[RMDB]
RNA sequence: GGGAACGACUCGAGUAGAGUCGAAAACUUGCAUUAUCUGCAGCUGUUUUAGCAACUGUCGCCAGAUACAUAAGAGCAGAGAUGAUAGAGGUAUUAAGUUCAGACUAUAUUUUAUUAGCGAGAGCUACUCCGGCAAAGACUUCGGUCUUUGCCGGAGAAAAGAAACAACAACAACAAC
Reactivity to 2A3 in 0.01 (KOAc 150mM, MgCl2 10mM, bicine 150mM(pH8.5), 24C), signal-to-noise 2, nucleotides 027 to 126: c000u010u030g000c000a060u020u070a220u290c040u000g000c000a060g090c000u000g110u160u190u090u230a020g000c010a020a060c090u150g100u190c120g090c090c000a000g000a070u130a080c040a020u260a050a050g010a020g130c000a070g000a040g000a030u090g000a020u080a200g040a030g020g050u170a070u200u130a120a000g030u000u000c020a010g020a000c000u000a000u000a110u120u300u130u060a050u060u030a010g000c000g010a060g000a000g160c000u040a120